[RMDB]
RNA sequence: GGGAACGACUCGAGUAGAGUCGAAAAGAUGAGUGUACUCGCAUGACAUAGUGAGUUACGUGGCGUUGACUCUACGCUAUGUAAAGUGUAUAUGUCAUUACACUUACACUCAUGGUAGAGUCAAGAAGGUUGUGCAAGAUUUCGAUCUUGCACAACCAAAAGAAACAACAACAACAAC
Reactivity to 2A3 in 0.01 (KOAc 150mM, MgCl2 10mM, bicine 150mM(pH8.5), 24C), signal-to-noise 3, nucleotides 027 to 126: g090a010u010g000a000g000u010g010u000a010c000u000c000g040c030a060u170g090a180c050a100u290a020g030u000g030a000g020u000u010a020c000g000u000g010g000c000g000u020u130g000a020c000u000c000u000a000c000g000c020u010a000u000g000u000a000a000a050g010u010g090u020a010u000a050u190g260u060c020a030u030u000a000c000a000c020u000u010a000c010a000c010u000c000a000u000g000g010u040a000g000a000g020u000c010a000a030g160a030a020
Reactivity to DMS in 0.01 (KOAc 150mM, MgCl2 10mM, bicine 150mM(pH8.5), 24C), signal-to-noise 1, nucleotides 027 to 126: g000a010u000g000a000g110u000g030u020a030c050u000c000g000c020a120u080g020a300c300a270u030a080g030u000g010a000g000u000u000a000c040g040u010g000g000c000g000u070u000g030a000c000u000c000u010a110c000g000c000u010a000u000g000u020a020a000a000g000u000g000u000a030u000a060u030g030u070c210a030u060u030a000c000a000c000u000u000a000c000a000c000u000c000a010u000g010g040u020a020g000a010g000u000c000a090a130g000a100a080